About this RNA
An RNA of 177 nucleotides, treated with DMS and 2A3 and read out base by base. 2A3 adducts were read by reverse transcription with SuperScript II with manganese. Source: RMDB library TTRDEL, as collected in RNAgym. DMS adducts were read by reverse transcription with MarathonRT. For DMS, 5,334 sequencing reads were counted.

[RMDB]
RNA sequence: GGGAACGACUCGAGUAGAGUCGAAAAGAUAUGGAGUGAUCUCGACACGCGAGGAUCUCGGAAACGAGGGAGCGUGGCGAGAGUCACUCCUAAGUCAAACGAUUAUCCUGUUCGCAGGAUAAUCGAAGAUCCGUACAUAGUUCGCUAUGUACGGAUCAAAAGAAACAACAACAACAAC
Reactivity to DMS in 0.01 (KOAc 150mM, MgCl2 10mM, bicine 150mM(pH8.5), 24C), signal-to-noise 3, nucleotides 027 to 126: g010a040u000a300u000g000g000a010g020u000g000a060u000c000u010c010g010a030c000a010c010g020c000g000a090g010g000a030u000c000u000c010g000g000a120a100a200c000g000a020g010g000g000a020g010c000g020u010g000g000c010g000a010g000a020g010u000c000a000c010u000c000c000u010a000a050g000u000c030a100a110a290c010g000a000u000u010a010u000c000c000u000g020u000u020c230g010c010a000g010g000a010u000a000a000u000c000g000a070a080
Reactivity to 2A3 in 0.01 (KOAc 150mM, MgCl2 10mM, bicine 150mM(pH8.5), 24C), signal-to-noise 3, nucleotides 027 to 126: g040a020u060a040u210g000g020a010g000u010g010a000u020c000u000c000g000a000c000a000c000g040c000g060a230g090g000a020u000c010u000c010g040g020a080a060a030c020g010a010g000g030g000a020g020c010g000u000g000g010c010g000a000g000a000g000u010c000a000c000u000c000c000u010a040a010g050u010c030a060a030a050c020g010a000u000u000a000u020c000c000u010g050u080u110c300g010c050a000g000g000a000u000a000a000u010c000g010a030a020